[RMDB]
RNA sequence: GGGAACGACUCGAGUAGAGUCGAAAAGUCGCUCGCGGCAGGGCCGAUCGCGUACGGUGCGGCCGCCGCGCGCCUCGUCACGCUGUUCGGCGCGCCGCUCGAUCACGCGGGCGCGAUCGGGAUCGCACGUAUGAUACGGAUUCGUCCGUAUCAUACGAAAAGAAACAACAACAACAAC
Reactivity to 2A3 in 0.01 (KOAc 150mM, MgCl2 10mM, bicine 150mM(pH8.5), 24C), signal-to-noise 6, nucleotides 027 to 126: g050u030c020g010c140u050c070g060c040g060g000c060a100g060g060g050c020c000g000a010u020c000g000c010g020u050a060c040g030g070u070g020c000g010g010c020c000g000c000c000g000c000g000c010g000c000c020u150c080g150u130c030a060c090g050c060u160g050u180u130c010g000g000c010g010c090g000c000c000g000c000u020c030g060a150u120c040a030c110g110c000g040g020g000c010g010c000g000a010u010c000g030g020g030a110u070c040g000c050a040
Reactivity to DMS in 0.01 (KOAc 150mM, MgCl2 10mM, bicine 150mM(pH8.5), 24C), signal-to-noise 6, nucleotides 027 to 126: g020u000c060g030c040u000c080g020c040g010g010c080a100g020g010g010c010c010g000a020u000c010g010c030g020u010a070c010g010g010u000g000c000g010g010c010c020g010c030c030g010c070g000c010g010c060c040u010c240g000u010c180a100c060g000c030u010g030u000u010c030g010g000c010g010c170g010c010c020g010c030u000c040g010a090u010c140a070c140g010c030g000g000g010c000g020c010g000a000u000c010g000g000g000a090u000c040g010c100a250